[RMDB]
RNA sequence: GGGAACGACUCGAGUAGAGUCGAAAAGAUAUGGAACGUGAAUCAGGCGUUGAAACCCUCAUAGUGGUGGUCGGAAACGACCACGUAACAUCUAUGAGGGUGGAGCCUGUGGCACGUUCCUAAGUCAGUUCCCAUCCAAGUUCGCUUGGAUGGGAACAAAAGAAACAACAACAACAAC
Reactivity to DMS in 0.01 (KOAc 150mM, MgCl2 10mM, bicine 150mM(pH8.5), 24C), signal-to-noise 1, nucleotides 027 to 126: g000a040u010a300u010g010g010a000a010c010g030u000g000a140a030u000c020a000g020g020c010g070u010u040g040a200a240a020c010c000c020u000c000a020u000a000g000u010g040g020u000g010g000u000c000g010g030a110a070a140c000g000a020c000c020a000c010g000u000a000a250c140a020u020c030u000a000u000g020a020g010g010g000u010g000g000a050g000c010c000u010g040u000g020g010c010a020c000g000u000u000c000c020u000a020a070g020u010c020a120